[RMDB]
RNA sequence: GGGAACGACUCGAGUAGAGUCGAAAAGGGAGCGAGUUCGCUCGCUCCCAAACCCGUUGAAGCGGCACUUACGGAGCUUCAUACAUCUAAGAAGUGCAAUAAAAAGCGGUAGCUUCGGCUACCGCAAGAUCAAUAAAAUGUUCGCAUUUUAUUGAUCAAAAGAAACAACAACAACAAC
Reactivity to 2A3 in 0.01 (KOAc 150mM, MgCl2 10mM, bicine 150mM(pH8.5), 24C), signal-to-noise 3, nucleotides 027 to 126: g000g010g010a000g020c000g000a010g020u020u030c060g010c020u000c010g000c000u020c000c000c000a010a000a000c000c000c000g040u060u030g030a060a000g050c070g030g010c070a000c030u030u120a060c150g110g060a030g020c010u010u000c010a000u090a030c030a050u090c060u150a120a030g090a110a000g100u030g010c020a030a020u180a150a110a010a040a010g010c000g000g000u000a000g000c000u030u040c190g040g000c000u000a000c000c000g000c000a000a000
Reactivity to DMS in 0.01 (KOAc 150mM, MgCl2 10mM, bicine 150mM(pH8.5), 24C), signal-to-noise 5, nucleotides 027 to 126: g010g010g000a010g020c000g020a020g020u010u010c260g020c000u000c010g040c000u000c000c010c000a010a050a080c000c000c000g020u000u000g010a030a080g020c040g020g020c020a030c020u010u000a300c100g000g020a150g010c040u000u010c070a060u010a100c120a070u020c100u000a060a110g010a040a030g010u000g000c020a160a100u020a030a090a080a170a080g000c000g000g000u000a010g010c010u000u010c190g020g010c010u000a010c000c000g010c000a010a010